[RMDB]
RNA sequence: GGGAACGACUCGAGUAGAGUCGAAAAGUGGCAGGAUGAACAGGCUCGUCUUCGGACGAACUAGGUGGUCCACACCAGUGUCUCGGACAGCGGUUCGAUUCCGCUCAGCUCCAUUCCCCCGACCCACGCGUACAACGAUAUUCGUAUCGUUGUACGCAAAAGAAACAACAACAACAAC
Reactivity to DMS in 0.01 (KOAc 150mM, MgCl2 10mM, bicine 150mM(pH8.5), 24C), signal-to-noise 3, nucleotides 027 to 126: g010u010g000g010c020a110g010g000a050u010g010a080a030c050a130g010g000c050u000c150g000u000c000u000u030c120g010g010a030c000g020a050a030c030u000a090g020g000u000g000g000u010c140c130a120c030a080c010c010a060g000u010g000u000c020u000c210g000g000a070c050a080g010c010g020g020u010u000c080g000a170u020u010c000c000g000c010u000c060a090g030c050u020c050c010a200u020u010c010c010c000c040c010g000a150c040c020c030a080c210
Reactivity to 2A3 in 0.01 (KOAc 150mM, MgCl2 10mM, bicine 150mM(pH8.5), 24C), signal-to-noise 8, nucleotides 027 to 126: g060u060g030g010c080a050g020g030a030u060g020a060a040c020a050g170g010c020u050c080g020u000c000u070u100c160g070g010a000c010g020a060a040c020u060a150g030g000u030g020g040u120c110c060a080c010a000c030c010a000g030u020g020u040c050u030c060g020g010a010c020a030g010c010g020g020u020u040c030g040a100u100u020c000c010g010c020u030c020a010g020c020u010c010c000a020u040u040c010c000c000c010c010g040a060c010c000c010a050c080
The record gives the reactivity of an RNA of 177 nucleotides to DMS and 2A3. The reactions ran in a buffer of 150 mM KOAc, 10 mM MgCl2 and 150 mM bicine (pH 8.5), at 24 C.